[RMDB]
RNA sequence: GGGAACGACUCGAGUAGAGUCGAAAAGAUCGCUCGUCCAGGUGGGGUGAGUGAGCCGCGAUGCUCUCUCGCGGUGCGAGGGCACCGCUUGGCUACCGCUUUCGGGUUGGCCGUCCUAAGCGGAGUGGCGCGUUUGAUCGUUCGCGAUCGAACGCGCAAAAGAAACAACAACAACAAC
Reactivity to 2A3 in 0.01 (KOAc 150mM, MgCl2 10mM, bicine 150mM(pH8.5), 24C), signal-to-noise 1, nucleotides 027 to 126: g020a010u020c020g020c000u000c000g020u030c000c000a050g020g050u100g000g010g010g000u000g050a020g010u000g000a000g030c000c010g100c000g000a000u000g000c000u000c000u000c040u050c020g020c050g040g060u090g000c000g060a040g020g140g000c000a000c020c010g000c020u020u000g040g000c000u030a130c000c000g000c000u030u080u000c100g000g050g000u050u000g130g050c000c000g020u110c000c010u040a020a000g000c000g010g000a000g030u140g060
Reactivity to DMS in 0.01 (KOAc 150mM, MgCl2 10mM, bicine 150mM(pH8.5), 24C), signal-to-noise 1, nucleotides 027 to 126: g010a080u060c010g000c020u030c020g000u010c030c000a160g000g000u040g020g030g030g000u030g000a050g000u030g000a040g000c050c050g110c030g000a060u020g010c010u000c040u000c020u040c110g000c020g000g000u060g020c020g000a170g000g000g000c020a050c020c000g000c040u000u020g000g030c000u000a030c000c030g010c020u000u000u080c240g000g000g000u010u000g000g010c040c030g010u000c000c000u050a040a050g020c060g000g000a160g040u080g000